[RMDB]
Overview
Conditions: 150 mM KOAc, 10 mM MgCl2 and 150 mM bicine (pH 8.5), 24 C. This 207-nucleotide RNA was probed chemically with 2A3 and DMS. The DMS profile rests on 3,272 reads. The data come from the RNA Mapping Database (RMDB), library OK3TST. Reactivities are given for positions 27 through 156. DMS adducts were read by reverse transcription with MarathonRT.
RNA sequence: GGGAACGACUCGAGUAGAGUCGAAAAAGUGAUAUUGAAGGCUUGGUUAAGCUCGUAAACUUCUUCGUUAUUGAGGACAGCCACGUUGAGACCAAAGGAAUAAGCAGAGGUUUCUACGCGUGGAUCAAUUUUUGUGAUUUCCGACAGCACUGGGUCAGAAUGGUGAACAUUUCGAUGUUCACCAUUCAAAAGAAACAACAACAACAAC
Reactivity to 2A3 in 0.01 (KOAc 150mM, MgCl2 10mM, bicine 150mM(pH8.5), 24C), signal-to-noise 3, nucleotides 027 to 156: a000g120u120g030a090u070a040u180u120g030a080a010g030g000c030u080u070g030g040u180u120a060a030g020c020u020c050g040u020a060a080a070c040u050u020c000u090u030c040g120u100u110a110u110u150g030a020g000g020a040c040a010g030c010c010a000c030g010u060u080g020a020g030a030c000c010a100a010a000g060g050a110a170u130a300a010g090c080a020g010a030g050g010u040u040u030c040u050a070c070g000c010g030u030g000g000a010u010c030a040a040u030u080u080u110u130g040u010g070a080u010u030u080c040c020g040a020c010a030g010c040a020c030u030g000g000g040u020c030a010
Reactivity to DMS in 0.01 (KOAc 150mM, MgCl2 10mM, bicine 150mM(pH8.5), 24C), signal-to-noise 2, nucleotides 027 to 156: a080g000u020g020a080u010a090u010u000g020a100a030g030g000c000u000u000g030g020u000u010a110a070g000c000u000c030g020u000a070a080a080c010u010u000c020u000u010c000g000u000u010a140u010u010g020a080g000g000a080c050a100g040c000c000a010c040g040u010u000g010a120g000a050c020c020a020a260a210g010g010a120a100u010a070a190g000c060a100g000a300g020g010u010u000u000c000u000a030c060g040c020g010u010g010g000a060u000c030a010a050u000u000u010u010u020g030u010g010a180u000u000u000c000c040g000a100c050a160g040c050a040c040u000g000g010g010u000c060a080